Annotation:
Structure probing data (2A3) for a 207-nucleotide construct.

RNA sequence: GGGAACGACUCGAGUAGAGUCGAAAAAGAGUCUGGAUCACCUGGGCGGUGCUGACCAUGACACCUCGCAGCUGCUGCCCGGAGGCCGUGACAUACGUGGCGGGGUUUUCGAGGAUGCUGUUGGUGGUGGCUUCCACCAUCUUGGUCAACAGUUUGACCUUACGUGAACGUUCGCGUUCACGUAAGGAAAAGAAACAACAACAACAAC
Reactivity to 2A3 in 0.01 (KOAc 150mM, MgCl2 10mM, bicine 150mM(pH8.5), 24C), signal-to-noise 2, nucleotides 027 to 156: a000g070a000g010u010c020u090g010g000a090u020c040a040c100c000u000g020g000g000c040g010g030u010g000c020u000g060a130c030c040a080u200g060a030c010a150c120c030u040c030g010c000a020g040c010u170g010c000u010g000c020c010c080g000g000a040g020g000c080c040g050u050g060a030c040a040u170a030c150g020u030g020g000c030g000g000g010g030u040u050u060u150c020g010a050g060g010a050u070g030c040u020g000u080u020g010g030u010g010g020u000g000g040c090u270u050c010c000a010c020c000a000u040c070u040u040g040g000u040c010a060a000c040a070g010u060u080u050g070a040
Source information
Conditions: 150 mM KOAc, 10 mM MgCl2 and 150 mM bicine (pH 8.5), 24 C. Source: RMDB library OK3TST, as collected in RNAgym.